[RMDB]
The record gives the reactivity of an RNA of 177 nucleotides to DMS. The reactions ran in a buffer of 150 mM KOAc, 10 mM MgCl2 and 150 mM bicine (pH 8.5), at 24 C. For DMS the reverse transcriptase was MarathonRT.

RNA sequence: GGGAACGACUCGAGUAGAGUCGAAAAGAUAUGGAUCCCUGUGGCUAGCUCAUAGGUCGGAAACGACCUGAUGAGCUUGGACCCACCGGGAUCCUAAGUCAAACUAGCUAACUUCGGUUAGCUAGAACAUCUAGUCGGACUUCGGUCCGACUAGAUGAAAAGAAACAACAACAACAAC
Reactivity to DMS in 0.01 (KOAc 150mM, MgCl2 10mM, bicine 150mM(pH8.5), 24C), signal-to-noise 1, nucleotides 027 to 126: g040a060u000a280u010g000g010a030u000c010c000c000u010g000u000g010g010c040u000a050g020c000u000c010a000u000a020g030g000u010c000g050g030a030a080a300c020g010a020c000c000u000g010a010u010g010a000g040c000u010u000g000g000a130c300c000c010a050c000c170g050g000g000a010u000c000c010u000a030a020g010u000c040a140a170a300c010u000a010g000c000u000a010a020c000u010u000c240g010g040u000u000a010g030c000u000a000g000a130a170